[RMDB]
RNA sequence: GGGAACGACUCGAGUAGAGUCGAAAAACAAUUCUUGUGUGGUUUGAUUUGGUAGGACUAUCCGUCUUAUCCCAGUUUUGGCCAGGGUCAGUACGCACAGUAUUAUAACAGCUCACCGUAUCCAGCACAUUAUAUGACCAGCAGCAACACCAGCCCAAUCAUGGAUGGGAUUCGUCCCAUCCAUGAUAAAAGAAACAACAACAACAAC
Reactivity to DMS in 0.01 (KOAc 150mM, MgCl2 10mM, bicine 150mM(pH8.5), 24C), signal-to-noise 1, nucleotides 027 to 156: a100c030a070a110u000u000c030u000u030g030u030g000u000g000g020u000u000u000g010a100u000u000u000g010g010u000a050g040g000a130c000u000a190u000c170c100g010u000c050u000u000a050u000c000c000c010a090g050u000u000u000u000g010g030c060c020a140g000g010g000u000c020a020g000u000a050c030g000c060a080c030a080g010u000a050u000u000a100u000a030a040c040a060g000c040u000c000a060c090c050g080u010a080u000c000c020a060g000c050a070c090a110u000u000a160u000a090u000g040a100c080c050a050g020c040a020g000c050a060a050c030a050c010c030a090g010c050c010c030a110
Reactivity to 2A3 in 0.01 (KOAc 150mM, MgCl2 10mM, bicine 150mM(pH8.5), 24C), signal-to-noise 3, nucleotides 027 to 156: a000c060a010a090u090u050c060u150u100g020u040g000u030g020g030u040u030u050g040a050u060u070u060g010g020u050a060g010g020a020c030u050a160u150c060c100g010u000c010u010u070a080u090c040c010c000a080g040u060u040u130u170g090g000c050c050a040g040g000g030u000c010a010g000u020a050c030g030c030a020c010a030g060u040a080u150u100a100u040a090a030c040a010g030c000u010c040a020c060c030g060u030a050u020c030c000a010g050c020a030c000a080u110u110a080u060a040u230g080a060c020c010a010g010c000a010g000c020a010a030c000a010c030c020a010g070c000c020c000a010
Chemical mapping of a 207-nucleotide RNA with DMS and 2A3.
In probing experiments dimethyl sulfate is read out at A N1 and C N3, which are open when not base-paired.
For 2A3 the reverse transcriptase was SuperScript II with manganese.
The data come from the RNA Mapping Database (RMDB), library OK3TST.
Values are in units of 0.01, from 0 to 300, in steps of 10.